[RMDB]
An RNA of 207 nucleotides, treated with DMS and 2A3 and read out base by base. DMS adducts were read by reverse transcription with MarathonRT. The DMS profile rests on 3,765 reads.
RNA sequence: GGGAACGACUCGAGUAGAGUCGAAAACGGUUACGCCUUCUUUACCGUUAUCAAGGAAGGUACUCGGCCAUGCUAACGGAAGCAUUAUUCCUUAGGCGCAUGUCGCCGCCAGCAUGGUGUGAGGGGAAAAAGUAUGCUGGGUUCGCCCAGCAUACAAGCGGAACAUUAAGUUCGCUUAAUGUUCCGCAAAAGAAACAACAACAACAAC
Reactivity to DMS in 0.01 (KOAc 150mM, MgCl2 10mM, bicine 150mM(pH8.5), 24C), signal-to-noise 2, nucleotides 027 to 156: c030g030g030u000u000a020c030g020c000c000u000u000c010u000u000u010a050c040c000g030u020u010a020u010c160a020a030g010g050a020a020g040g000u000a050c050u000c000g010g000c000c000a030u010g010c000u000a010a020c080g000g020a010a040g050c080a090u010u000a160u000u010c060c050u000u000a140g020g030c120g030c210a050u010g030u020c030g000c000c020g010c000c040a030g000c010a020u000g020g030u000g010u010g010a040g030g020g030g000a100a050a050a070a190g020u000a000u000g030c000u010g000g010g010u010u010c300g040c000c000c000a020g030c020a000u000a000c010a020a120
Reactivity to 2A3 in 0.01 (KOAc 150mM, MgCl2 10mM, bicine 150mM(pH8.5), 24C), signal-to-noise 5, nucleotides 027 to 156: c000g000g000u030u040a030c090g020c000c000u010u020c000u010u020u040a020c010c010g260u120u110a060u110c110a010a000g040g000a000a000g000g000u020a030c000u000c010g030g000c000c000a010u000g000c000u060a080a050c060g000g010a010a010g050c100a250u090u120a140u220u100c010c010u050u130a090g000g000c000g020c060a130u270g110u300c050g000c040c000g020c040c020a000g000c000a000u010g000g020u060g180u150g030a030g010g030g010g090a060a040a010a050a000g000u000a000u000g010c000u010g000g000g020u030u030c070g070c010c000c000a000g000c000a000u000a000c000a000a010

The 2A3 profile rests on 4,994 reads.
For 2A3 the reverse transcriptase was SuperScript II with manganese.